[RMDB]
RNA sequence: GGGAACGACUCGAGUAGAGUCGAAAAGAUAUGGAUUUAUCUCAUGAGGACUAUGAAGUCGGAAACGAUGGAGUCCCAUGAGAGUAAAUCCUAAGUCAAAACGCUCCACUCUUCGGAGUGGAGCGAACAUACAGUCAAACUUCGGUUUGACUGUAUGAAAAGAAACAACAACAACAAC
Reactivity to DMS in 0.01 (KOAc 150mM, MgCl2 10mM, bicine 150mM(pH8.5), 24C), signal-to-noise 3, nucleotides 027 to 126: g000a040u010a300u010g000g010a010u010u000u000a030u000c000u000c000a000u000g000a160g020g010a020c000u010a200u000g010a090a220g000u000c000g000g010a120a100a170c010g010a020u000g010g000a010g010u000c000c000c010a000u000g000a000g000a010g010u000a010a000a010u000c000c000u000a030a160g020u000c030a080a070a120a180c030g010c000u000c000c000a020c010u000c000u000u010c210g020g010a020g010u000g000g010a000g010c000g000a010a060
Reactivity to 2A3 in 0.01 (KOAc 150mM, MgCl2 10mM, bicine 150mM(pH8.5), 24C), signal-to-noise 4, nucleotides 027 to 126: g020a030u110a050u200g000g000a010u000u020u000a000u010c010u000c000a000u000g040a300g150g020a000c000u060a190u300g040a030a020g020u010c020g030g000a120a080a020c010g000a000u020g040g040a020g000u000c000c000c000a000u000g000a000g000a000g010u010a000a000a000u000c000c000u010a190a010g050u020c020a000a040a090a160c030g000c010u000c000c000a010c000u030c000u030u120c300g170g000a000g000u000g000g000a000g010c000g000a020a000

This 177-nucleotide RNA was probed chemically with DMS and 2A3.